[RMDB]
RNA sequence: GGGAACGACUCGAGUAGAGUCGAAAAGAGAACUCACGUGUACUCACGUGUGAACGUACACGUACGAGAGUACGUACACACGAACGAUCGUUCUCGUUCUCGAUCGAGAUCUCUCUCUCGAGUACGAUCGAUCGAGUGUGAGUGAGAGAUCGAUCACGCAAAUUAUCGGGUUCGCCCGAUAAUUUGCAAAAGAAACAACAACAACAAC
Reactivity to 2A3 in 0.01 (KOAc 150mM, MgCl2 10mM, bicine 150mM(pH8.5), 24C), signal-to-noise 1, nucleotides 027 to 156: g020a000g030a000a020c020u020c000a040c010g080u040g090u240a060c010u000c050a040c000g000u000g000u030g040a060a030c050g050u120a000c070a000c040g080u220a100c180g090a110g000a040g230u000a000c000g040u060a020c000a000c000a000c000g050a250a050c020g000a000u010c020g030u010u010c000u000c050g000u010u000c030u030c020g010a030u020c070g020a030g030a180u030c050u020c020u000c000u020c050u020c070g010a000g010u000a010c000g000a000u150c030g030a100u060c070g000a010g010u060g010u010g000a010g000u020g000a020g000a000g000a040u010c050g000a050u080c040a030c150